[RMDB]
RNA sequence: GGGAACGACUCGAGUAGAGUCGAAAAGAUAUGGAGUGUAAACGUGCACUAUCUUUCGGAAACGAAAGACGAAUGAACUACACGCGAAUACACUCCUAAGUCAAAGAAAGAGCUUCGGCUCUUUCAAGUUCAAAACUGAGUUCGCUCAGUUUUGAACAAAAGAAACAACAACAACAAC
Reactivity to DMS in 0.01 (KOAc 150mM, MgCl2 10mM, bicine 150mM(pH8.5), 24C), signal-to-noise 2, nucleotides 027 to 126: g040a090u000a300u030g010g000a020g060u000g000u000a020a030a280c000g020u000g000c080a120c060u000a270u000c000u020u030u000c000g020g000a160a080a150c010g020a000a040a020g000a000c150g000a130a080u010g010a080a110c100u020a170c040a050c010g000c000g020a110a250u000a030c000a000c000u000c010c000u000a000a070g000u000c030a060a040a210g000a000a000a000g020a030g000c000u000u020c170g020g020c060u000c000u020u000u000c000a080a100